[RMDB]
RNA sequence: GGGAACGACUCGAGUAGAGUCGAAAAGAUAGGUAGGUUGACGCGUUGUUAGGUUUUUGGCUUCUUCGCGCCGUACUUACUGCGACCUUGUCGGCGACCAUCAACACCAAGGGAGUCUUUGGCUCCACAGUAAUACCAUGUUCGCAUGGUAUUACUGAAAAGAAACAACAACAACAAC
Reactivity to 2A3 in 0.01 (KOAc 150mM, MgCl2 10mM, bicine 150mM(pH8.5), 24C), signal-to-noise 9, nucleotides 027 to 126: g060a050u170a100g010g030u030a030g000g050u000u040g010a010c010g000c020g020u010u020g050u090u080a050g040g070u030u030u020u130u300g150g010c010u060u010c010u050u050c060g010c010g000c060c010g010u030a020c010u020u010a010c020u030g010c020g030a100c010c030u040u110g060u040c020g000g020c010g010a030c030c010a030u060c030a010a070c040a030c070c020a040a050g080g010g010a010g010u000c000u090u130u180g060g000c000u000c000c000a020
Reactivity to DMS in 0.01 (KOAc 150mM, MgCl2 10mM, bicine 150mM(pH8.5), 24C), signal-to-noise 8, nucleotides 027 to 126: g000a090u010a090g020g010u000a020g010g010u000u000g010a030c030g010c090g020u010u000g010u000u010a040g010g000u000u000u010u010u020g010g010c020u000u000c050u000u000c060g020c060g010c010c010g000u000a020c030u000u000a030c060u000g010c090g000a100c050c070u000u000g010u000c050g020g010c070g000a090c060c040a040u000c070a030a080c120a140c070c060a090a100g010g010g010a050g020u000c020u000u000u010g010g010c010u000c000c010a120